The record gives the reactivity of an RNA of 207 nucleotides to 2A3 and DMS. For DMS the reverse transcriptase was MarathonRT. Source: RMDB library M2RFPK, as collected in RNAgym. The 2A3 profile rests on 1,412 reads. The reactions ran in a buffer of 150 mM KOAc, 10 mM MgCl2 and 150 mM bicine (pH 8.5), at 24 C.
[RMDB]
RNA sequence: GGGAACGACUCGAGUAGAGUCGAAAAGGUCUGGCCUGAUCGGAAACAGCAGCAGGUGAGUCCGCCUUAUGUGAAGGAUCGGCUGAAACACGAGGAAAUACUGAGCCAACGCAAGACGGUAGCCGAAAAAAUCUAGUUCACUUCGGUGAACUAGAAACUGUAGUAAACGCUUCGGCGUUUACUACAGAAAAGAAACAACAACAACAAC
Reactivity to 2A3 in 0.01 (KOAc 150mM, MgCl2 10mM, bicine 150mM(pH8.5), 24C), signal-to-noise 2, nucleotides 027 to 156: g040g010u030c040u040g030g040c000c000u040g030a060u110c060g090g080a150a060a070c040a060g110c020a000g010c000a000g000g040u020g060a010g040u000c030c030g000c020c050u070u070a180u110g030u020g070a070a020g010g010a040u080c010g020g000c030u050g000a070a050a020c080a010c030g030a030g020g060a100a160a000u120a090c050u050g040a010g010c000c000a060a040c040g000c080a060a000g040a040c040g010g040u050a030g000c000c050g000a050a050a000a000a000a010u000c000u000a000g000u000u000c000a000c000u010u040c090g070g000u000g000a000a000c000u000a010g000a000a000a000
Reactivity to DMS in 0.01 (KOAc 150mM, MgCl2 10mM, bicine 150mM(pH8.5), 24C), signal-to-noise 1, nucleotides 027 to 156: g050g000u000c050u000g030g030c030c080u000g000a090u010c060g010g000a210a070a130c030a090g020c020a090g010c080a040g000g020u000g000a130g010u000c020c010g010c000c010u010u000a060u010g030u000g000a100a180g020g000a040u010c030g020g060c020u010g020a120a080a110c050a060c060g010a090g000g000a040a100a090u000a000c030u000g000a130g000c000c030a090a200c070g040c010a050a060g010a080c000g010g030u000a130g000c040c000g010a000a010a070a070a050a050u030c000u000a000g000u000u000c000a010c000u000u020c290g030g000u000g000a000a020c000u000a010g020a020a010a060